[RMDB]
RNA sequence: GGGAACGACUCGAGUAGAGUCGAAAAGCUGACGGAUAACGUGGUGUUAUAGAUAUAUAUCUUACGUCAUAAUAAUAUAAUAGCUCGUGAAAUAUAUAUAUCGUAGCUAAAUUAUUAUCGUCAGCGAACUAGGGACUAGUUUCGACUAGUCCCUAGUAAAAGAAACAACAACAACAAC
Reactivity to DMS in 0.01 (KOAc 150mM, MgCl2 10mM, bicine 150mM(pH8.5), 24C), signal-to-noise 1, nucleotides 027 to 126: g040c000u000g000a020c020g010g000a160u010a040a070c210g020u000g000g010u010g010u000u020a020u010a040g000a040u010a050u000a050u000a020u010c040u000u010a020c000g000u000c010a050u000a080a090u000a060a110u010a100u010a110a190u000a100g000c060u000c020g010u010g010a110a100a080u010a110u010a050u000a100u000a090u020c030g000u020a050g000c000u000a070a050a050u000u000a020u000u000a020u020c000g010u000c000a030g010c000g000a070
Reactivity to 2A3 in 0.01 (KOAc 150mM, MgCl2 10mM, bicine 150mM(pH8.5), 24C), signal-to-noise 1, nucleotides 027 to 126: g000c000u000g000a000c020g100g030a070u050a090a000c030g030u010g060g020u050g040u080u130a120u090a190g020a010u030a010u020a000u000a020u110c010u000u060a020c000g010u020c040a010u030a170a040u020a000a060u110a040u050a240a230u090a040g000c020u010c050g010u010g040a010a110a010u170a010u030a000u010a000u000a000u200c000g030u040a000g000c000u010a000a000a060u040u020a000u020u010a030u060c010g000u000c010a000g010c010g000a000